This 177-nucleotide RNA was probed chemically with DMS and 2A3.
2A3 adducts were read by reverse transcription with SuperScript II with manganese.
The 2A3 profile rests on 9,075 reads.
The data come from the RNA Mapping Database (RMDB), library M2PK50.
[RMDB]
RNA sequence: GGGAACGACUCGAGUAGAGUCGAAAACGCGAACUGUUCGCAGUUCGCGAAAUAACAAACAACAGCUAACCUACUGCGAUAAGCCCUAGCUAUGUAGGUAAAAAAGAGGAAAGUUCGCUUUCCUCAAGUCAAACUAUUAGUUCGCUAAUAGUUUGACAAAAGAAACAACAACAACAAC
Reactivity to DMS in 0.01 (KOAc 150mM, MgCl2 10mM, bicine 150mM(pH8.5), 24C), signal-to-noise 5, nucleotides 027 to 126: c030g020c000g010a000a000c000u000g020u010u020c180g040c000a010g020u000u010c010g030c010g020a010a020a040u010a100a120c150a060a070a070c090a030a060c120a070g020c160u000a080a050c010c000u010a010c010u000g000c030g000a140u000a080a120g020c020c000c010u000a180g000c020u000a040u000g020u000a020g010g000u000a010a060a100a040a050a050g000a020g010g010a010a000a010g010u010u000c200g020c000u000u000u000c000c000u000c000a040a060
Reactivity to 2A3 in 0.01 (KOAc 150mM, MgCl2 10mM, bicine 150mM(pH8.5), 24C), signal-to-noise 5, nucleotides 027 to 126: c010g010c000g000a000a000c000u010g030u060u080c240g000c130a000g010u010u010c000g000c000g010a000a000a000u040a020a010c060a060a110a000c040a020a020c020a030g080c050u140a040a040c000c010u010a000c000u040g010c000g040a050u050a230a050g030c000c000c000u010a010g000c010u030a040u220g010u020a000g020g000u050a020a090a000a010a000a000g020a010g000g010a020a000a000g020u100u160c260g080c210u010u000u010c000c010u000c010a000a000